[RMDB]
RNA sequence: GGGAACGACUCGAGUAGAGUCGAAAAUGAUCGAGAGAUCUAACGAUGUACGCGAGUCAACGGCACAGACUCGAGCGAAAGCUCGGUCGAAAGACCGCGUACAUCGGUCGGCAAGUGUCGAGUCAAACACGUAGUGGCUGUUCGCAGCCACUACGUGAAAAGAAACAACAACAACAAC
Reactivity to 2A3 in 0.01 (KOAc 150mM, MgCl2 10mM, bicine 150mM(pH8.5), 24C), signal-to-noise 2, nucleotides 027 to 126: u120g000a010u010c010g020a000g010a000g000a100u020c000u010a100a020c000g000a000u000g030u010a000c000g020c010g040a070g080u010c030a080a060c070g150g020c150a040c010a100g030a050c050u060c250g000a000g020c020g030a100a030a020g000c000u000c000g030g020u010c010g000a020a000a010g000a010c000c020g000c000g000u000a000c000a000u000c000g000g020u010c000g000g000c030a120a300g050u050g020u080c000g020a000g020u000c000a020a090a000
Reactivity to DMS in 0.01 (KOAc 150mM, MgCl2 10mM, bicine 150mM(pH8.5), 24C), signal-to-noise 2, nucleotides 027 to 126: u010g020a010u010c010g030a300g000a240g000a000u000c000u010a110a120c020g010a020u000g000u000a000c000g010c010g010a070g000u010c000a050a120c110g010g020c120a060c090a180g000a020c000u010c000g000a000g040c010g000a120a080a200g020c000u000c000g040g020u000c010g000a110a080a120g040a010c000c000g000c020g000u000a000c000a010u010c000g020g020u000c010g040g000c030a070a120g000u020g000u010c020g040a070g000u000c010a040a070a130